[RMDB]
RNA sequence: GGGAACGACUCGAGUAGAGUCGAAAAUAUAUCGCAUAGCGAUAAUACGCCGCUAUGCGGCGUAUCGCAUACGCAUAUAUGCGUAUCGCAUAUAUAUAUAUCGCGCGAUACGCGCGAUAAUACGCGCCGAAACAAUGACGUUCGCGUCAUUGUUUCGAAAAGAAACAACAACAACAAC
Reactivity to DMS in 0.01 (KOAc 150mM, MgCl2 10mM, bicine 150mM(pH8.5), 24C), signal-to-noise 1, nucleotides 027 to 126: u020a030u000a020u000c040g000c000a130u000a210g020c000g030a080u000a110a150u010a190c100g050c050c000g040c040u030a040u000g000c000g050g030c000g010u000a000u000c070g010c020a110u000a000c040g020c040a080u010a110u000a090u010g010c020g010u000a030u000c110g010c030a020u010a020u000a120u000a140u020a110u000a000u010c020g000c010g030c010g010a090u000a050c160g040c000g000c000g020a010u000a030a100u010a020c050g000c030g010c200
Reactivity to 2A3 in 0.01 (KOAc 150mM, MgCl2 10mM, bicine 150mM(pH8.5), 24C), signal-to-noise 1, nucleotides 027 to 126: u080a000u000a000u030c030g000c060a100u100a060g000c010g010a000u060a090a100u090a050c040g030c000c050g000c240u220a060u300g000c000g000g000c020g040u000a030u070c040g000c000a010u030a030c010g020c040a000u130a000u040a060u300g030c010g010u030a040u070c050g000c040a020u040a000u000a000u000a010u020a010u000a000u200c000g010c010g030c050g210a100u160a300c090g010c010g000c030g000a020u000a040a070u080a020c030g000c040g010c040